The record gives the reactivity of an RNA of 177 nucleotides to DMS and 2A3. The reactions ran in a buffer of 150 mM KOAc, 10 mM MgCl2 and 150 mM bicine (pH 8.5), at 24 C.

RNA sequence: GGGAACGACUCGAGUAGAGUCGAAAAAAACGCGGGUAGCGCGCACGCCCGGCGAAGAAGUUCGCAUACGCGGUGUGCUGGUGCCGAAGUGUCUGCUGCAACGGCACGCUCGACACCUCAGACAGGAAUACCCAUCUAGCUUCGGCUAGAUGGGUAUAAAAGAAACAACAACAACAAC
Reactivity to DMS in 0.01 (KOAc 150mM, MgCl2 10mM, bicine 150mM(pH8.5), 24C), signal-to-noise 3, nucleotides 027 to 126: a120a020a070c080g040c040g020g020g010u000a070g020c100g000c140g000c030a030c030g000c010c010c080g000g010c000g000a000a000g010a130a120g000u000u000c020g000c020a120u010a300c090g000c020g040g000u020g010u000g000c030u000g000g050u000g000c020c000g000a070a140g030u000g010u020c050u000g000c130u010g040c120a090a220c070g000g020c000a040c000g000c050u000c050g000a040c080a020c010c000u010c090a110g000a140c200a070g010g010a120
Reactivity to 2A3 in 0.01 (KOAc 150mM, MgCl2 10mM, bicine 150mM(pH8.5), 24C), signal-to-noise 3, nucleotides 027 to 126: a010a000a000c070g010c010g000g080g000u090a050g060c030g000c010g010c020a010c000g000c020c000c000g010g010c010g000a020a040g070a150a030g230u040u010c000g000c020a040u050a210c040g050c140g040g000u000g020u000g000c030u040g050g020u000g010c000c020g010a050a020g010u070g030u050c050u100g070c030u070g060c040a100a080c040g020g000c000a000c010g020c060u020c000g000a000c010a040c000c000u050c020a030g030a140c020a030g000g150a080